[RMDB]
RNA sequence: GGGAACGACUCGAGUAGAGUCGAAAAGACGGCGAUGGCGGCACGAAGAUGCUCAGCCGCCGCAGCACCGGCGGCAGGAAAUGGGCCACCGUGACGGGCGGCCGCUCCACGCCGACGAAGCUGACCGCUCGAGGAUGGGUUUCGACCCAUCCUCGAGAAAAGAAACAACAACAACAAC
Reactivity to 2A3 in 0.01 (KOAc 150mM, MgCl2 10mM, bicine 150mM(pH8.5), 24C), signal-to-noise 2, nucleotides 027 to 126: g110a030c000g010g120c050g110a190u150g000g020c030g070g000c070a020c300g080a050a040g090a120u180g020c000u000c070a000g010c000c000g000c000c030g000c030a000g010c020a000c000c020g020g000c000g060g070c020a090g010g290a020a170a110u180g080g000g060c050c020a010c020c000g110u150g080a110c080g040g020g000c000g020g000c030c000g000c000u080c000c000a090c000g000c000c000g000a000c040g000a000a000g080c100u140g070a090c010c020g020
About this RNA
The record gives the reactivity of an RNA of 177 nucleotides to 2A3. For 2A3 the reverse transcriptase was SuperScript II with manganese. It was measured as part of the RMDB library OK1LIB. The reactions ran in a buffer of 150 mM KOAc, 10 mM MgCl2 and 150 mM bicine (pH 8.5), at 24 C.